[RMDB]
RNA sequence: GGGAACGACUCGAGUAGAGUCGAAAAGAUAUGGAUGUAUGGUGAACUACCGAUCUAUGUCGGAAACGACAUAGUCGGCACCCGCUACAUCCUAAGUCAAAAGUUUGCUACCUUCGGGUAGCAAACAGAUUUCAGUUAUCUUCGGAUAACUGAAAUCAAAAGAAACAACAACAACAAC
Reactivity to 2A3 in 0.01 (KOAc 150mM, MgCl2 10mM, bicine 150mM(pH8.5), 24C), signal-to-noise 2, nucleotides 027 to 126: g040a030u110a040u180g000g000a000u010g010u010a030u300g010g000u020g000a100a100c090u170a090c300c010g010a030u110c010u020a000u000g000u000c000g010g030a070a090a030c020g010a000c010a000u000a000g020u000c000g000g020c010a000c010c000c000g020c010u000a000c000a000u000c000c000u000a080a020g050u020c040a000a060a020a230g000u000u020u000g000c000u000a000c000c000u030u100c300g190g000g000u000a000g020c000a000a000a010c000a000
Reactivity to DMS in 0.01 (KOAc 150mM, MgCl2 10mM, bicine 150mM(pH8.5), 24C), signal-to-noise 5, nucleotides 027 to 126: g010a060u010a300u000g000g000a000u000g000u000a000u010g010g010u000g010a050a050c090u010a300c050c020g000a010u000c010u000a000u010g000u010c000g010g000a110a070a260c020g010a010c000a000u000a000g010u000c010g000g000c000a010c010c010c060g000c020u000a000c000a010u000c000c000u000a030a110g000u010c030a090a120a130a170g000u010u000u000g000c000u000a010c000c000u000u010c260g010g010g010u010a010g000c000a000a010a000c010a070